[RMDB]
RNA sequence: GGGAACGACUCGAGUAGAGUCGAAAACAUGCGCGUCCGAAGUAUGGGAAGCAUAAGUGGUCACACCGCCUUCCGCUCUUAUCAUUGUAUCUCGAAUACUAAAUCUGUGCUUUGAGCCUAGGCGCGGUCUACUGAUGCUGUUCGCGGCGUCGGUAGAAAAAGAAACAACAACAACAAC
Reactivity to 2A3 in 0.01 (KOAc 150mM, MgCl2 10mM, bicine 150mM(pH8.5), 24C), signal-to-noise 2, nucleotides 027 to 126: c060a020u170g030c000g000c020g060u060c020c010g060a080a010g020u090a080u180g060g000g020a020a000g010c000a040u050a180a060g030u040g040g130u100c080a050c010a020c100c020g010c000c000u020u000c000c010g000c000u000c010u020u060a050u050c010a050u030u110g020u060a020u020c060u050c100g150a190a020u040a100c050u190a000a000a150u110c110u020g020u010g000c010u020u010u040g010a010g010c000c000u010a010g000g000c000g010c010g010g010